Record summary
Conditions: 150 mM KOAc, 10 mM MgCl2 and 150 mM bicine (pH 8.5), 24 C. An RNA of 177 nucleotides, treated with 2A3 and DMS and read out base by base. It was measured as part of the RMDB library OK2TST. For 2A3 the reverse transcriptase was SuperScript II with manganese.
RNA sequence: GGGAACGACUCGAGUAGAGUCGAAAAGGAGGCGGAGGAGUUUGCCGAGCAGGACAAGGCCGUCAAGGCCAAGGUGGACGCGCGUAACGCUCUCGAGACCUACUGCUACAACAUGAAGCAGACGAUCGAGUCACAGACACUUCGGUGUCUGUGACUCAAAAGAAACAACAACAACAAC
Reactivity to 2A3 in 0.01 (KOAc 150mM, MgCl2 10mM, bicine 150mM(pH8.5), 24C), signal-to-noise 1, nucleotides 027 to 126: g100g010a010g000g050c050g010g040a070g050g000a060g040u030u090u080g050c040c070g000a040g000c100a040g000g040a040c070a050a090g030g050c000c000g050u170c130a060a050g000g000c000c000a040a000g070g000u000g020g030a040c020g000c000g000c000g080u000a070a040c030g000c010u050c000u020c060g020a020g000a060c010c000u040a040c020u060g030c080u120a090c020a200a050c030a160u070g030a040a010g000c010a000g000a080c040g060a040u210c060
Reactivity to DMS in 0.01 (KOAc 150mM, MgCl2 10mM, bicine 150mM(pH8.5), 24C), signal-to-noise 2, nucleotides 027 to 126: g000g000a100g000g020c100g000g040a240g090g000a190g000u010u000u040g000c070c030g000a020g000c140a210g000g020a050c140a080a160g000g070c000c000g000u000c300a000a200g000g000c000c020a030a030g030g030u010g000g000a050c100g010c100g000c050g060u010a130a080c100g010c040u000c000u000c110g000a130g000a100c020c030u000a130c000u000g000c020u000a120c080a060a070c200a120u000g000a060a070g010c010a040g000a080c240g020a170u010c160